[RMDB]
RNA sequence: GGGAACGACUCGAGUAGAGUCGAAAAAUCAAACAGCAGGUACAAGAAGCGAGUGGUGUACCUGUCUAUAUUGGAGGUUUAUAAAUGGAUAAUAAUGAUUGUAAGUUUAUUGGCCGAAUAACAAAAGACUUAGAGAUAAGAGAAUCUACAAAUGGAAACUACCAGUGAUUUUCGAAUCACUGGUAGUAAAAGAAACAACAACAACAAC
Reactivity to DMS in 0.01 (KOAc 150mM, MgCl2 10mM, bicine 150mM(pH8.5), 24C), signal-to-noise 2, nucleotides 027 to 156: a090u010c050a130a090a130c070a100g000c000a040g030g020u020a020c010a070a110g010a080a190g020c040g010a060g050u000g050g020u000g000u000a010c000c000u050g000u000c030u000a090u000a110u000u000g030g050a210g030g010u010u010u000a070u000a050a050a080u010g020g030a090u000a050a110u000a080a090u000g000a150u010u000g010u010a080a120g000u000u000u000a070u010u000g000g010c020c050g000a110a060u000a050a110c040a040a060a050a100g010a050c020u000u000a060g000a140g000a170u000a070a130g020a190g040a090a050u000c020u000a070c070a010a050a060u000g000g000a070a110
Reactivity to 2A3 in 0.01 (KOAc 150mM, MgCl2 10mM, bicine 150mM(pH8.5), 24C), signal-to-noise 3, nucleotides 027 to 156: a000u130c010a000a010a020c010a020g000c010a000g000g010u000a000c010a070a000g120a120a010g090c060g040a070g070u070g010g030u040g010u000a010c000c000u010g040u000c000u030a080u020a040u040u030g060g010a050g000g040u060u100u010a090u040a080a050a030u080g010g020a000u030a160a020u080a050a060u140g070a050u070u130g030u030a040a090g010u000u010u030a050u070u030g020g000c020c010g010a040a060u080a100a020c030a030a080a030a000g020a010c010u030u030a040g010a010g000a080u090a120a010g030a000g050a050a020u070c030u140a050c040a040a060a030u220g040g060a120a060